[RMDB]
RNA sequence: GGGAACGACUCGAGUAGAGUCGAAAACAGUGAAAGGCGAGGUCAGCGUCAGCAGCCCGCCGCUGAACGCAGGACAACGCCAAAAGUCGGCGGGUAAAGAUACAGGCUGAAGAUACAGCCAGUACAAGCUACUGACCGUCUUCGGACGGUCAGUAGCAAAAGAAACAACAACAACAAC
Reactivity to 2A3 in 0.01 (KOAc 150mM, MgCl2 10mM, bicine 150mM(pH8.5), 24C), signal-to-noise 1, nucleotides 027 to 126: c050a060g090u040g300a100a080a040g030g000c010g000a040g100g070u050c000a000g000c000g000u000c000a000g000c090a000g000c000c000c000g140c000c000g000c000u000g000a000a050c000g030c000a000g120g110a000c000a130a300c300g000c000c080a010a010a000a000g130u080c040g000g000c030g010g000g000u000a000a000a000g100a030u000a030c000a050g000g000c000u100g000a000a000g000a040u130a100c000a000g000c020c000a000g000u000a000c000a040a040